[RMDB]
RNA sequence: GGGAACGACUCGAGUAGAGUCGAAAAGAUAUGGAUAAGACUAUGAAGCCUGUCCACUCGGAAACGAGUGGAGCAGGUGGAGUCUGUCCUAAGUCAAAAGCAGUGUUGCCUUCGGGCAACACUGCAACUUGUAAUGCGUGUUCGCACGCAUUACAAGAAAAGAAACAACAACAACAAC
Reactivity to DMS in 0.01 (KOAc 150mM, MgCl2 10mM, bicine 150mM(pH8.5), 24C), signal-to-noise 1, nucleotides 027 to 126: g010a010u010a300u000g000g010a000u020a080a040g030a000c000u000a180u020g010a210a250g000c000c000u000g000u000c000c000a000c000u000c000g030g000a110a070a190c000g000a020g050u010g030g000a070g030c000a000g000g030u000g000g010a000g000u000c000u000g030u010c000c010u000a070a100g010u000c040a050a100a070a090g010c000a010g000u000g000u000u000g000c000c010u010u020c200g010g020g020c000a000a000c000a010c000u010g000c020a010a020
Reactivity to 2A3 in 0.01 (KOAc 150mM, MgCl2 10mM, bicine 150mM(pH8.5), 24C), signal-to-noise 1, nucleotides 027 to 126: g010a020u060a070u140g020g010a050u180a300a230g010a000c070u140a300u300g030a020a010g020c000c000u020g050u040c000c000a010c000u000c000g030g030a100a090a060c020g000a000g020u000g000g030a010g070c020a010g000g000u000g010g000a000g000u010c010u010g000u040c000c000u030a210a010g080u040c020a070a060a030a110g030c000a030g000u020g000u020u020g000c000c000u040u140c300g080g040g000c000a000a010c000a000c000u000g020c000a000a000